[RMDB]
RNA sequence: GGGAACGACUCGAGUAGAGUCGAAAAGUGAUGAGCGCGAGUCCUGGCCUGAGACAGGUGUAUAAGCUGCUCACUGAGCGAGCGCUUAUACAGAGGGAUACUCAGGCUAUCCCUCUCGUCGCUCAGACUUGAUUGCUGAAUUCGUUCAGUAGUCAAGAAAAGAAACAACAACAACAAC
Reactivity to DMS in 0.01 (KOAc 150mM, MgCl2 10mM, bicine 150mM(pH8.5), 24C), signal-to-noise 9, nucleotides 027 to 126: g010u010g010a150u000g010a030g010c000g010c010g000a030g010u010c010c020u000g000g000c010c020u000g000a180g020a030c010a020g010g020u000g010u000a010u000a010a010g010c000u020g040c000u000c000a070c130u010g010a150g020c160g000a010g020c020g010c010u000u000a000u000a000c000a020g010a030g000g000g000a030u000a010c010u000c040a020g000g010c300u000a000u000c010c010c000u000c000u000c010g010u010c030g000c000u000c000a010g000a160
Reactivity to 2A3 in 0.01 (KOAc 150mM, MgCl2 10mM, bicine 150mM(pH8.5), 24C), signal-to-noise 9, nucleotides 027 to 126: g190u140g100a200u030g000a040g000c010g000c000g010a010g020u020c010c010u060g070g200c000c010u200g130a160g000a080c010a010g020g010u010g030u010a000u000a020a050g030c140u180g000c000u160c010a060c090u190g080a070g140c140g020a000g000c010g000c000u010u000a000u000a000c000a000g050a000g010g010g000a010u010a020c010u010c020a000g000g000c000u000a000u000c000c020c000u000c000u000c010g200u150c050g000c000u000c000a000g000a000